Chemical mapping of a 177-nucleotide RNA with DMS and 2A3. Values cover nucleotides 27 to 126. 2A3 adducts were read by reverse transcription with SuperScript II with manganese. The DMS profile rests on 2,378 reads. For 2A3, 1,110 sequencing reads were counted. For DMS the reverse transcriptase was MarathonRT. The reactions ran in a buffer of 150 mM KOAc, 10 mM MgCl2 and 150 mM bicine (pH 8.5), at 24 C.

RNA sequence: GGGAACGACUCGAGUAGAGUCGAAAAGACUUUAUAAACUUGACUUCAUUAUGCACUUCCCCAACAAUACCAUAGUGAAAGAAGGAGAAAUAGGUUUUAAGACAGUCAAGCCAAAUCCUUUUUAGUGUACUCAGAUACAGUUCGCUGUAUCUGAGUAAAAAGAAACAACAACAACAAC
Reactivity to DMS in 0.01 (KOAc 150mM, MgCl2 10mM, bicine 150mM(pH8.5), 24C), signal-to-noise 4, nucleotides 027 to 126: g000a060c040u000u000u000a030u020a050a140a200c010u000u000g010a170c050u010u010c020a070u000u000a040u000g010c120a110c190u010u000c010c000c010c070a050a110c130a070a100u020a090c240c050a040u000a060g030u000g000a040a060a030g000a110a070g010g010a060g000a070a100a070u000a060g000g000u000u000u000u000a030a140g010a090c110a050g010u000c030a020a040g000c040c020a020a110a130u000c010c000u000u000u000u000u010a090g010u020g020
Reactivity to 2A3 in 0.01 (KOAc 150mM, MgCl2 10mM, bicine 150mM(pH8.5), 24C), signal-to-noise 1, nucleotides 027 to 126: g000a020c000u140u130u100a140u180a150a070a010c000u030u070g050a030c010u040u000c050a100u030u050a050u010g010c020a020c080u070u050c030c000c000c000a080a030c010a080a080u100a060c020c000a050u040a040g010u080g000a110a000a000g030a020a010g020g000a040g040a040a130a020u100a060g130g040u000u050u010u180a010a010g080a020c030a020g020u030c020a040a000g000c000c000a010a030a030u020c020c000u040u080u000u020u080a080g000u060g040